An RNA of 177 nucleotides, treated with DMS and 2A3 and read out base by base. DMS adducts were read by reverse transcription with MarathonRT. Reactivities are given for positions 27 through 126. It was measured as part of the RMDB library M2PK50. The DMS profile rests on 4,839 reads.
RNA sequence: GGGAACGACUCGAGUAGAGUCGAAAAUUGUCCGGGUUCGCCCGGACAAAGCGGGAGGCCACCGGAGGCCUCCUCCCAGGCGAUCCCACGCCUCGCUCCGGAGCGUGAUGACCUUCGGGUCAUCAAAGACUAAAGUCUGAUUCGUCAGACUUUAGUCAAAAGAAACAACAACAACAAC
Reactivity to DMS in 0.01 (KOAc 150mM, MgCl2 10mM, bicine 150mM(pH8.5), 24C), signal-to-noise 4, nucleotides 027 to 126: u000u000g010u000c010c010g010g010g020u000u020c220g020c000c000c000g000g000a010c000a010a010a040g030c200g000g000g000a010g020g010c010c060a070c090c080g000g010a090g010g010c000c010u000c010c010u000c050c030c040a080g010g010c010g010a080u010c020c000c020a250c020g010c000c020u000c110g000c070u000c020c040g010g010a160g000c190g000u000g010a020u000g000a010c000c000u000u010c220g010g000g000u000c000a000u010c000a050a070a090
Reactivity to 2A3 in 0.01 (KOAc 150mM, MgCl2 10mM, bicine 150mM(pH8.5), 24C), signal-to-noise 1, nucleotides 027 to 126: u050u020g000u010c010c000g000g010g000u030u040c230g080c000c000c000g000g000a000c000a000a000a010g010c040g020g010g000a000g000g000c030c010a040c050c070g040g040a040g000g000c010c010u000c000c000u000c000c000c000a010g020g010c010g020a060u040c020c010c000a040c010g010c010c020u030c050g060c020u000c010c010g040g010a060g080c130g070u080g000a010u000g000a000c010c000u020u040c220g100g010g000u000c000a010u000c000a000a050a000